[RMDB]
RNA sequence: GGGAACGACUCGAGUAGAGUCGAAAAACCUUUGUGCCAUCCAAACUUCUUGGAUUUAUACAGGGAACACGUUCCCAUUGGGAACGUGGGAACUGUAUUGUCAGAAGGUAGGAUGGCACUCUGGUAAAACUUACUAUAAGUUCGCUUAUAGUAAGAAGGUAUUUAUUAACUUCGGUUAAUAAAUACCAAAAGAAACAACAACAACAAC
Reactivity to DMS in 0.01 (KOAc 150mM, MgCl2 10mM, bicine 150mM(pH8.5), 24C), signal-to-noise 1, nucleotides 027 to 156: a010c000c000u000u010u010g000u020g020c010c000a010u000c000c000a050a130a300c020u000u010c040u000u040g040g030a050u000u000u000a030u000a050c020a020g000g000g020a300a300c000a010c000g000u000u000c000c000c020a160u010u000g030g040g030a020a050c010g020u020g000g000g000a300a220c000u000g000u000a000u010u000g000u000c040a130g000a060a020g030g000u000a300g020g000a030u000g000g030c000a000c000u000c000u010g000g000u000a040a040a070a080c000u000u000a000c010u000a000u010a000a000g000u000u000c300g020c010u000u010a010u010a000g000u000a000a000g040a070a070
Reactivity to 2A3 in 0.01 (KOAc 150mM, MgCl2 10mM, bicine 150mM(pH8.5), 24C), signal-to-noise 5, nucleotides 027 to 156: a000c000c000u010u010u010g000u000g000c000c000a000u000c010c010a200a300a130c020u030u030c020u100u240g230g000a070u170u300u040a010u020a000c000a000g000g000g020a000a020c010a000c000g000u000u010c010c010c070a130u200u300g000g000g000a000a010c000g000u000g000g000g010a020a010c000u000g000u000a000u000u000g010u010c000a000g000a010a000g010g000u030a010g000g000a000u000g000g000c000a000c000u000c000u010g000g000u000a050a050a030a040c000u000u000a000c000u000a010u010a010a020g030u030u110c210g080c100u000u000a000u000a000g000u000a000a010g020a010a010